[RMDB]
This 207-nucleotide RNA was probed chemically with 2A3 and DMS.
RNA sequence: GGGAACGACUCGAGUAGAGUCGAAAACGCAGCAUUUCCAUGGCUCGCAGGCUGGAGGUUUGGCAGGCAGAUCAACGCCCUGUCAUAUACUACAAGUAUCUUGAUAACUGCAUAUGACGACAUGCAAAAGACAGUCAACUCCAACUUCCAAGGACUCGACGUAGGGAAAAUUCGUUUUCCCUACGUCAAAAGAAACAACAACAACAAC
Reactivity to 2A3 in 0.01 (KOAc 150mM, MgCl2 10mM, bicine 150mM(pH8.5), 24C), signal-to-noise 7, nucleotides 027 to 156: c070g020c020a020g000c020a060u090u070u020c060c040a080u110g070g000c020u040c110g030c030a010g040g030c030u030g020g010a030g010g030u050u090u050g020g020c010a020g020g000c010a020g030a240u170c090a090a080c090g020c020c000c000u000g000u010c010a000u010a000u000a060c030u030a050c020a100a140g020u040a070u080c060u060u100g060a060u100a140a070c050u040g010c020a010u050a050u150g100a060c100g010a020c020a060u040g010c010a070a030a020a030g040a030c050a030g020u050c030a030a030c030u010c020c000a010a040c030u070u020c020c000a020a080g070g000a040c040u030c120
Reactivity to DMS in 0.01 (KOAc 150mM, MgCl2 10mM, bicine 150mM(pH8.5), 24C), signal-to-noise 2, nucleotides 027 to 156: c050g030c020a080g040c040a080u000u010u000c050c020a150u000g050g020c030u000c070g040c050a060g060g000c020u000g000g010a050g000g000u000u000u010g050g020c110a110g020g000c050a110g020a210u010c090a110a200c140g000c080c010c020u000g030u000c000a040u000a060u000a040c020u010a100c070a030a060g000u000a080u000c050u000u020g000a140u020a060a090c040u000g000c000a050u000a070u000g010a050c010g040a110c090a060u010g020c090a030a070a130a170g000a090c060a080g000u010c000a050a060c030u010c000c000a020a060c030u000u010c010c010a030a110g000g000a070c110u010c080

Annotation: The RNA was probed in 150 mM KOAc, 10 mM MgCl2 and 150 mM bicine (pH 8.5) at 24 C. The DMS profile rests on 2,972 reads.